The data come from the RNA Mapping Database (RMDB), library OK1LIB. This 177-nucleotide RNA was probed chemically with DMS and 2A3. The reactions ran in a buffer of 150 mM KOAc, 10 mM MgCl2 and 150 mM bicine (pH 8.5), at 24 C.

RNA sequence: GGGAACGACUCGAGUAGAGUCGAAAAAACAAAGAUAAGUGCAAGACUAAUCAGUAUGAUUUUGAUCAUGUUCAAUCACCUUACCUUUGUCCAUAAAUUUAGAGAAUACUGCAGUACCUAAAAAGGCUCCUGUACUUGAGUUCGCUCAAGUACAGGAAAAAGAAACAACAACAACAAC
Reactivity to DMS in 0.01 (KOAc 150mM, MgCl2 10mM, bicine 150mM(pH8.5), 24C), signal-to-noise 3, nucleotides 027 to 126: a120a020c000a000a010a030g010a060u010a000a020g040u000g020c160a200a140g000a020c020u000a180a060u030c030a020g040u000a070u030g000a130u030u000u060u000g000a010u000c010a060u010g000u000u030c120a060a250u030c040a050c090c030u000u020a020c010c000u000u000u010g020u010c020c030a040u060a010a120a130u040u010u010a050g010a060g000a090a110u030a090c070u000g010c090a060g010u000a030c020c000u000a000a030a120a130a070g010g000c080
Reactivity to 2A3 in 0.01 (KOAc 150mM, MgCl2 10mM, bicine 150mM(pH8.5), 24C), signal-to-noise 5, nucleotides 027 to 126: a000a000c020a020a010a000g000a020u050a010a000g010u060g100c080a160a050g020a020c010u100a070a020u030c020a030g140u120a130u250g160a220u170u180u090u080g050a030u020c060a050u080g070u130u090c040a020a030u080c010a030c050c000u040u020a010c000c000u000u010u000g060u000c020c000a050u170a120a090a050u110u140u050a100g020a000g020a100a050u100a100c020u120g000c030a010g050u090a070c010c000u090a080a070a020a010a050g090g000c030